[RMDB]
RNA sequence: GGGAACGACUCGAGUAGAGUCGAAAACAUCUCACCCAAGUGGGCAGCCAAGCCAACGCAGUGUUGGGGCCACCAGCCCCACGGCCCCAGCAGGCCGGGCUGCACCCCUCAGCCCUGCCCCAGGUGAACUACUGCGAAGUUUCGACUUCGCAGUAGUAAAAGAAACAACAACAACAAC
Reactivity to DMS in 0.01 (KOAc 150mM, MgCl2 10mM, bicine 150mM(pH8.5), 24C), signal-to-noise 2, nucleotides 027 to 126: c160a090u010c020u000c050a070c020c030c100a140a130g000u000g010g020g000c030a060g040c090c190a180a170g000c030c050a100a060c200g030c130a120g000u000g010u000u040g000g020g000g040c010c020a090c100c110a160g040c010c000c000c060a140c090g000g030c000c000c010c050a050g010c020a050g000g030c030c120g040g010g020c000u000g000c060a190c030c000c030c000u030c010a080g010c020c050c010u000g000c010c010c030c030a090g010g020u010g010a050

Source: RMDB library OK2TST, as collected in RNAgym. This 177-nucleotide RNA was probed chemically with DMS. The DMS profile rests on 910 reads. The reactions ran in a buffer of 150 mM KOAc, 10 mM MgCl2 and 150 mM bicine (pH 8.5), at 24 C.